[RMDB]
RNA sequence: GGGAACGACUCGAGUAGAGUCGAAAACGAGUAUCGGAUAUAGACCCAGGAUAAGUGAUGUCCCCAGCAGAAUAAGCAUCUAUUGGACAAUAGUAAAACCGGGACACAUACUUUUGAUUAACAGCACACCAGCAUCAGGUUUCGACCUGAUGCUGGUAAAAGAAACAACAACAACAAC
Reactivity to 2A3 in 0.01 (KOAc 150mM, MgCl2 10mM, bicine 150mM(pH8.5), 24C), signal-to-noise 2, nucleotides 027 to 126: c050g000a010g110u180a110u150c060g000g020a000u030a000u070a130g100a030c060c000c000a000g130g000a140u060a230a000g100u000g140a230u010g000u000c010c000c000c000a030g000c010a100g000a180a000u250a120a000g000c040a030u020c000u000a020u010u000g150g070a000c020a120a070u000a040g040u090a000a000a000a000c020c000g000g020g000a000c000a000c010a080u090a100c000u020u000u000u250g140a120u110u050a060a000c010a030g000c060a030c000
Reactivity to DMS in 0.01 (KOAc 150mM, MgCl2 10mM, bicine 150mM(pH8.5), 24C), signal-to-noise 1, nucleotides 027 to 126: c000g000a270g000u030a050u040c030g010g000a070u050a210u000a130g040a170c070c030c070a040g000g000a150u010a020a010g040u000g000a100u000g040u000c010c000c000c060a190g040c140a000g030a040a090u000a070a190g000c030a110u000c000u000a020u000u000g000g000a030c150a060a000u000a010g030u050a060a160a190a050c140c140g000g000g050a030c000a000c030a030u000a040c000u000u000u010u000g000a220u040u000a100a000c100a040g000c150a090c300

This 177-nucleotide RNA was probed chemically with 2A3 and DMS. It was measured as part of the RMDB library OK1LIB. The reactions ran in a buffer of 150 mM KOAc, 10 mM MgCl2 and 150 mM bicine (pH 8.5), at 24 C. Values cover nucleotides 27 to 126.